Structure probing data (2A3) for a 207-nucleotide construct. Source: RMDB library OK3TST, as collected in RNAgym. The 2A3 profile rests on 503 reads. For 2A3 the reverse transcriptase was SuperScript II with manganese.
RNA sequence: GGGAACGACUCGAGUAGAGUCGAAAAUCGUGCGACGACUGACCAGCGGCACGUGCCGGUCGUGGUUGUGCCUGCGCUGCGGCGCAUUCUGGCUGUACCGCGACACCCGACCGGGUCGUCGCCGGCUGCGCGCAGUGCGUGCGGCUCACCUGCGAGAGUCCUUUAACCGUUUCGACGGUUAAAGGACAAAAGAAACAACAACAACAAC
Reactivity to 2A3 in 0.01 (KOAc 150mM, MgCl2 10mM, bicine 150mM(pH8.5), 24C), signal-to-noise 1, nucleotides 027 to 156: u070c000g000u060g050c000g030a070c000g000a000c150u060g010a020c010c000a030g030c040g010g000c000a090c170g020u090g170c000c000g000g000u000c010g040u260g000g010u190u160g030u040g040c010c030u250g030c000g000c000u010g000c020g160g000c110g000c190a080u300u090c060u200g040g000c000u010g000u000a010c020c040g000c000g030a000c000a040c010c000c000g000a010c080c000g000g000g000u010c000g000u000c010g000c050c000g100g080c000u020g000c080g050c010g000c060a050g070u050g100c030g000u030g050c010g000g010c010u010c010a060c000c000u040g030c040g040a070g010a010